[RMDB]
RNA sequence: GGGAACGACUCGAGUAGAGUCGAAAAGCAGACCUCAAGCCCAUUUAUCAAGCGGCCACUUUGGAGGAAUCUGAGGCUGCCUUGGAUGCGUUUGCCAACAAAUGGGACCAGACGUAUCCUGGCAUCAUAACCACACUUCUUUCGAGAAGUGUGGUUAAAAAGAAACAACAACAACAAC
Reactivity to 2A3 in 0.01 (KOAc 150mM, MgCl2 10mM, bicine 150mM(pH8.5), 24C), signal-to-noise 2, nucleotides 027 to 126: g030c000a020g010a080c000c000u040c040a020a020g000c010c010c010a080u150u260u140a300u220c080a090a020g040c100g080g000c030c030a090c100u180u150u220g130g020a050g030g000a050a170u000c020u030g010a030g080g020c070u010g000c010c010u030u120g000g000a000u000g000c000g000u000u020u020g020c000c020a040a110c040a070a300a200u140g050g020g040a030c120c020a000g000a000c000g000u000a010u000c000c000u000g000g000c000a010u020c000a010
Reactivity to DMS in 0.01 (KOAc 150mM, MgCl2 10mM, bicine 150mM(pH8.5), 24C), signal-to-noise 3, nucleotides 027 to 126: g030c040a080g020a100c000c010u010c030a050a160g000c020c010c020a140u020u000u020a170u010c160a090a070g030c110g010g020c030c120a090c130u000u000u010g030g020a020g010g010a070a070u010c040u000g000a100g000g010c080u000g000c010c010u000u000g010g000a030u000g010c010g010u000u000u000g000c010c030a070a190c140a080a110a110u000g020g000g000a190c300c010a020g000a010c010g020u020a020u000c010c000u000g000g010c030a020u000c110a170